[RMDB]
RNA sequence: GGGAACGACUCGAGUAGAGUCGAAAAGGCGCGGAUGGCGUGCAUCCCAACGAUGCGGGACAUGAGUAUCUGGCGGACAAGAUCGCGCCGCUGAUCAGCAUGGAGUUGGUUGGAUGAGUUGGGAGUCCAGAGCAAAAAGGUUCGCCUUUUUGCUCUGAAAAGAAACAACAACAACAAC
Reactivity to DMS in 0.01 (KOAc 150mM, MgCl2 10mM, bicine 150mM(pH8.5), 24C), signal-to-noise 2, nucleotides 027 to 126: g020g010c030g010c050g010g000a100u010g000g010c070g040u010g000c040a110u000c000c020c030a080a130c130g010a080u010g040c060g000g000g030a070c040a040u000g000a110g010u010a040u000c020u000g010g020c010g000g000a060c050a160a140g010a090u000c130g000c100g000c020c010g010c010u010g000a030u000c060a080g020c040a100u000g000g000a080g010u000u000g010g000u000u010g000g000a080u000g000a130g000u000u000g000g020g000a100g000u010c050

Structure probing data (DMS) for a 177-nucleotide construct. The DMS profile rests on 2,282 reads. The RNA was probed in 150 mM KOAc, 10 mM MgCl2 and 150 mM bicine (pH 8.5) at 24 C.